[RMDB]
RNA sequence: GGGAACGACUCGAGUAGAGUCGAAAACGGCAUGAUACCAUCGUUAUCGGGUCAACAGAGUAGUUGCAAAUGACAACAAUGCUCAGGGUUAUGCUCUCGCUGCCUAAUGGCGGUGCGGGAAACCCACAAAAGAUAUUGAUCUUCGGAUCAAUAUCAAGUGACUUCAACAGUUCGCUGUUGAAGUCACAAAAGAAACAACAACAACAAC
Reactivity to 2A3 in 0.01 (KOAc 150mM, MgCl2 10mM, bicine 150mM(pH8.5), 24C), signal-to-noise 3, nucleotides 027 to 156: c010g000g000c020a020u080g010a010u050a130c020c020a040u040c040g150u140u090a060u140c050g010g000g010u040c050a040a050c080a090g040a000g010u020a000g020u000u010g040c050a130a230a240u220g070a200c000a040a010c030a100a080u090g030c000u010c020a040g040g000g010u030u000a090u300g050c000u000c000u000c000g010c020u010g000c000c000u230a230a120u100g000g000c020g000g020u000g000c040g010g010g000a000a010a000c050c000c000a040c010a010a120a000a000g000a000u000a000u000u000g000a000u010c000u020u070c190g080g000a000u000c000a000a000u010a000u000c000a000a010